Conditions: 150 mM KOAc, 10 mM MgCl2 and 150 mM bicine (pH 8.5), 24 C. An RNA of 177 nucleotides, treated with DMS and read out base by base. It was measured as part of the RMDB library OK2TST.
RNA sequence: GGGAACGACUCGAGUAGAGUCGAAAAGAGACUGGUACCUUCCUAGGAGGGGUGUUGAGAGUCUGAGCCACACUCAAAUUCUUGGUGUGCAGUGUCUCUGAUCUGAAAUGUGCACCGUGAAUGUUAGCCUUUGCUCCUCGUUCGCGAGGAGCAAAGGAAAAGAAACAACAACAACAAC
Reactivity to DMS in 0.01 (KOAc 150mM, MgCl2 10mM, bicine 150mM(pH8.5), 24C), signal-to-noise 1, nucleotides 027 to 126: g010a060g000a070c000u010g010g020u020a080c070c050u020u000c050c020u020a100g010g000a100g000g010g020g050u000g040u010u000g000a060g010a040g010u000c020u000g020a110g010c070c120a060c240a150c040u000c070a030a100a130u020u020c010u000u010g030g000u010g000u000g000c030a030g010u000g000u000c020u000c060u010g010a150u010c060u000g000a010a150a050u000g010u000g010c020a000c000c020g000u020g000a060a030u000g000u000u000a080g010
DMS adducts were read by reverse transcription with MarathonRT.